Conditions: 150 mM KOAc, 10 mM MgCl2 and 150 mM bicine (pH 8.5), 24 C. Chemical mapping of a 207-nucleotide RNA with 2A3. Reactivities are rounded to 0.1 and cut off at 0 and 3. For 2A3 the reverse transcriptase was SuperScript II with manganese.

[RMDB]
RNA sequence: GGGAACGACUCGAGUAGAGUCGAAAAGGCAGAAGCGAGGCUCAGGGAAGGCUGCCAAGGUUCCUUAGCUCACAGGGCAGAGAACCGCAGCCACCGUUUUGACUCCCAGAACUGUGUUCUGCCCACUCCACGGGGUCCAGGGAGGGGUCUGGGGAAGUCGUAGACAGAGAUUCGUCUCUGUCUACGAAAAAGAAACAACAACAACAAC
Reactivity to 2A3 in 0.01 (KOAc 150mM, MgCl2 10mM, bicine 150mM(pH8.5), 24C), signal-to-noise 1, nucleotides 027 to 156: g010g000c000a020g000a020a010g050c120g080a030g080g000c090u020c110a090g010g000g000a090a100g030g010c000u000g000c020c080a140a120g000g020u010u020c010c000u010u130a050g020c000u020c030a230c160a090g040g000g060c060a030g040a000g000a080a000c000c000g030c000a000g000c020c010a080c020c010g040u120u030u020u150g000a040c020u040c000c000c060a040g030a050a010c050u080g010u050g150u150u000c010u000g000c010c000c000a040c020u090c010c030a050c010g010g000g000g010u080c150c050a110g060g000g020a220g010g010g000g000u110c090u220g040g000g000g030a070a040g040